[RMDB]
Chemical mapping of a 177-nucleotide RNA with DMS and 2A3. The RNA was probed in 150 mM KOAc, 10 mM MgCl2 and 150 mM bicine (pH 8.5) at 24 C. The 2A3 profile rests on 1,251 reads. Reactivities are rounded to 0.1 and cut off at 0 and 3. It was measured as part of the RMDB library OK2TST. The DMS profile rests on 1,493 reads.

RNA sequence: GGGAACGACUCGAGUAGAGUCGAAAACACUCAUACCACGUUAAUGGCAGAAUAUCUCGACUUAUGGACGAGUGAUAUCGAACACACGGAUCUUGGAAUUCCUACCAUCAAUUAUGAGUUGGUAAGCUGGUUAUUCUCCUUUCGAGGAGAAUAACCAAAAAGAAACAACAACAACAAC
Reactivity to DMS in 0.01 (KOAc 150mM, MgCl2 10mM, bicine 150mM(pH8.5), 24C), signal-to-noise 2, nucleotides 027 to 126: c060a130c030u000c010a080u000a050c220c080a080c260g000u000u000a040a070u000g000g000c090a040g020a040a030u010a040u000c020u000c100g020a080c030u000u010a110u000g020g030a120c010g010a050g000u010g000a120u010a100u000c040g000a010a130c060a020c060a020c170g030g000a040u000c020u000u000g000g010a090a140u000u000c040c020u000a050c010c020a000u000c080a030a090u010u010a060u000g020a070g010u020u000g010g020u000a060a060g020c190
Reactivity to 2A3 in 0.01 (KOAc 150mM, MgCl2 10mM, bicine 150mM(pH8.5), 24C), signal-to-noise 2, nucleotides 027 to 126: c070a000c020u080c000a010u080a120c010c010a010c050g030u050u120a080a040u100g060g000c070a020g000a140a070u090a090u150c050u000c020g030a100c010u100u150a070u210g050g040a070c030g000a030g040u020g030a010u010a070u090c030g050a080a010c000a000c000a000c100g070g040a070u000c010u000u060g040g060a040a000u100u020c000c000u000a020c020c040a020u050c030a040a100u070u130a050u300g150a070g080u080u060g040g000u070a090a080g120c110